[RMDB]
RNA sequence: GGGAACGACUCGAGUAGAGUCGAAAAUACCGCAGGCCUGCGGUGCGGCAGUGUGGAGACCUGCCGUAAGCCGUGUUGUUUUGACAACCGGGAGAAAGCGUAUGCGGAGGCAGCUCUUUCAGGGUCUAAAAGUAUGGGAUCUUCGGAUCCCAUACAACCGUGUUACCUAGUUCGCUAGGUAACACGGAAAAGAAACAACAACAACAAC
Reactivity to 2A3 in 0.01 (KOAc 150mM, MgCl2 10mM, bicine 150mM(pH8.5), 24C), signal-to-noise 1, nucleotides 027 to 156: u080a020c020c000g000c020a030g010g040c020c040u040g000c020g050g000u000g000c020g000g010c000a000g020u050g000u080g180g060a060g030a090c000c000u000g010c000c000g000u010a030a000g050c010c000g050u030g000u110u000g030u000u080u130u260g080a010c000a020a000c010c000g010g000g000a020g030a000a020a010g040c020g000u060a230u120g060c030g030g030a030g290g040c010a010g030c010u010c010u010u030u000c010a020g030g000g000u000c030u030a050a050a000a000g000u000a000u000g000g000g000a000u000c010u020u040c090g090g000a000u010c010c000c000a000u000a000c000a000a000
An RNA of 207 nucleotides, treated with 2A3 and read out base by base. The RNA was probed in 150 mM KOAc, 10 mM MgCl2 and 150 mM bicine (pH 8.5) at 24 C. 2A3 adducts were read by reverse transcription with SuperScript II with manganese. Values cover nucleotides 27 to 156.